[RMDB]
RNA sequence: GGGAACGACUCGAGUAGAGUCGAAAACUGGGCAGCUGGCAGCGUGGUGAAAGCUAUAUGAGGGCCUAUACCCAGGAUCUGACGCACAACUUCAACGGCUGGCUGGAUUGGAAUCUCGUGCUGGACGGGGUGAUUACUACUUCGGUAGUAAUCACCCAAAAGAAACAACAACAACAAC
Reactivity to 2A3 in 0.01 (KOAc 150mM, MgCl2 10mM, bicine 150mM(pH8.5), 24C), signal-to-noise 3, nucleotides 027 to 126: c030u010g020g010g020c030a050g010c020u040g080g000c040a010g060c060g030u010g010g030u100g090a080a050a020g050c030u020a010u000a050u300g040a110g000g100g070c010c010u070a070u100a080c030c020c020a010g040g030a040u010c040u060g020a060c010g000c030a050c040a050a000c010u070u070c080a140a060c080g040g000c000u020g000g000c010u000g010g050a120u050u060g140g060a120a090u000c040u000c060g030u030g040c000u030g000g020a010c020g050
Reactivity to DMS in 0.01 (KOAc 150mM, MgCl2 10mM, bicine 150mM(pH8.5), 24C), signal-to-noise 1, nucleotides 027 to 126: c040u000g000g000g000c050a070g020c100u000g000g010c020a010g000c110g050u020g000g020u000g000a080a060a080g000c140u050a110u040a040u010g000a190g010g000g010c080c000u000a080u020a300c100c010c060a130g000g000a010u000c000u000g010a120c050g000c030a070c180a080a060c010u020u000c070a040a080c020g000g000c060u000g000g000c000u000g010g000a000u000u000g010g000a100a080u010c040u000c030g040u010g000c030u000g030g030a170c040g000